Background:
Conditions: 150 mM KOAc, 10 mM MgCl2 and 150 mM bicine (pH 8.5), 24 C. An RNA of 207 nucleotides, treated with DMS and 2A3 and read out base by base. It was measured as part of the RMDB library M2RFPK.

[RMDB]
RNA sequence: GGGAACGACUCGAGUAGAGUCGAAAAGAAGGGUGAAACCCCUUGAUACUGUAGUGGAAAUUAUAAAUAAGAAGAGUUCUGAGUUGCUUAAGCAGAACUAAAAUAAAAAGACAAGCAUUAUUACAAACAUGGCGAGGUAAGUUCGCUUACCUCGCAAGAUGAAGUAAACGUUCGCGUUUACUUCAUCAAAAGAAACAACAACAACAAC
Reactivity to DMS in 0.01 (KOAc 150mM, MgCl2 10mM, bicine 150mM(pH8.5), 24C), signal-to-noise 1, nucleotides 027 to 156: g000a070a010g040g010g010u010g000a090a060a300c080c000c000c000u010u000g010a100u000a060c000u000g020u000a110g050u000g000g000a110a090a060u010u000a040u030a010a100a110u000a090a160g000a050a210g020a230g010u000u000c010u000g030a150g040u000u010g000c060u000u010a100a130g000c050a090g000a030a040c020u000a050a020a030a090u000a010a040a090a100a220g000a060c050a000a040g050c010a070u000u010a030u010u000a070c050a020a020a040c070a120u030g000g000c000g010a010g020g020u000a020a030g000u000u030c300g010c000u010u000a000c000c000u010c000g010c000a010a020
Reactivity to 2A3 in 0.01 (KOAc 150mM, MgCl2 10mM, bicine 150mM(pH8.5), 24C), signal-to-noise 4, nucleotides 027 to 156: g040a000a010g040g000g020u070g040a110a040a030c000c010c010c010u010u020g000a030u070a150c060u090g050u110a030g030u070g010g070a040a070a050u120u080a100u220a190a110a060u210a070a020g060a050a020g040a030g050u020u000c000u010g030a040g030u080u080g070c040u070u020a100a030g020c000a000g000a020a000c050u040a000a000a020a020u110a010a060a000a000a000g040a010c020a030a010g010c000a000u010u090a030u100u100a180c080a030a110a010c040a100u130g120g000c000g000a010g000g000u000a010a000g010u000u040c090g000c090u000u000a000c000c000u000c000g000c000a000a000